[RMDB]
RNA sequence: GGGAACGACUCGAGUAGAGUCGAAAAAGAUAAUAACUGCAGCAAAUUGCAAAAUUAGAUCAUUUUGUUGUCUAUUCAUGAUUUUUCACCUCGUUACCUUGCGUUUGACGCUUUUUACGUAAUUUAAAGGCGGAUAUUCAUUCGUGAAUAUCCGCCUAAAAGAAACAACAACAACAAC
Reactivity to 2A3 in 0.01 (KOAc 150mM, MgCl2 10mM, bicine 150mM(pH8.5), 24C), signal-to-noise 1, nucleotides 027 to 126: a000g030a030u100a000a170u150a150a000c070u040g000c000a000g050c040a130a130a230u290u000g000c010a040a040a090a040u170u170a140g150a140u090c000a000u070u020u020u020g100u030u030g000u010c000u000a080u000u050c010a010u060g260a240u000u000u000u000u170c000a040c000c000u000c000g010u000u090a120c000c000u000u060g000c000g050u000u000u100g060a000c010g010c000u060u040u030u020u130a000c000g030u030a000a140u000u070u230a030a150